The record gives the reactivity of an RNA of 207 nucleotides to DMS and 2A3.
DMS adducts were read by reverse transcription with MarathonRT.
For 2A3 the reverse transcriptase was SuperScript II with manganese.
High DMS reactivity at an A or C suggests that its Watson-Crick edge is free.
The DMS profile rests on 14,082 reads.
2A3 is a SHAPE reagent: it acylates the 2'-hydroxyl of flexible nucleotides of all four kinds.
[RMDB]
RNA sequence: GGGAACGACUCGAGUAGAGUCGAAAAGAAAGGAGGAAGAAAGCGGCUGGCUCUUCAGGCUCUGACUCUGAUGUUUAUCUGCUGAGUAGAUGAGCAGCCCACUACAGUUGUAGUUCUGGCACCAUCGUGCCAUCAAAGCCGCUUUACAACGUCACAAAGCUAAAUACGUAUUCGUACGUAUUUAGCUAAAAGAAACAACAACAACAAC
Reactivity to DMS in 0.01 (KOAc 150mM, MgCl2 10mM, bicine 150mM(pH8.5), 24C), signal-to-noise 5, nucleotides 027 to 156: g010a100a110a130g010g020a060g010g010a140a140g000a030a060a050g040c000g040g010c010u000g030g010c050u000c030u000u000c080a170g020g010c010u000c020u000g000a090c020u000c020u010g010a090u010g020u000u000u000a090u010c010u000g000c070u010g000a160g040u000a080g000a080u000g000a060g000c030a100g000c030c030c080a070c040u000a060c020a210g030u000u010g020u000a050g020u000u000c070u010g020g030c020a030c020c090a130u000c120g010u000g040c000c010a040u000c050a040a070a100g010c010c000g030c020u010u000u010a060c060a080a070c050g020u000c040a070c060a080a190
Reactivity to 2A3 in 0.01 (KOAc 150mM, MgCl2 10mM, bicine 150mM(pH8.5), 24C), signal-to-noise 7, nucleotides 027 to 156: g090a010a070a020g080g050a040g030g050a050a080g020a060a080a000g000c020g010g000c000u030g030g010c010u020c020u110u050c030a030g140g000c010u010c020u060g050a090c020u030c070u120g050a060u040g080u080u200u160a120u070c030u080g050c020u040g040a020g030u050a040g030a130u070g010a020g010c030a020g000c030c020c010a000c010u050a000c010a250g060u200u180g020u250a010g000u040u100c070u100g000g000c000a000c030c010a100u220c190g000u010g010c000c010a020u100c030a020a070a000g000c000c000g010c040u010u000u010a030c020a060a000c040g110u120c070a030c120a180a180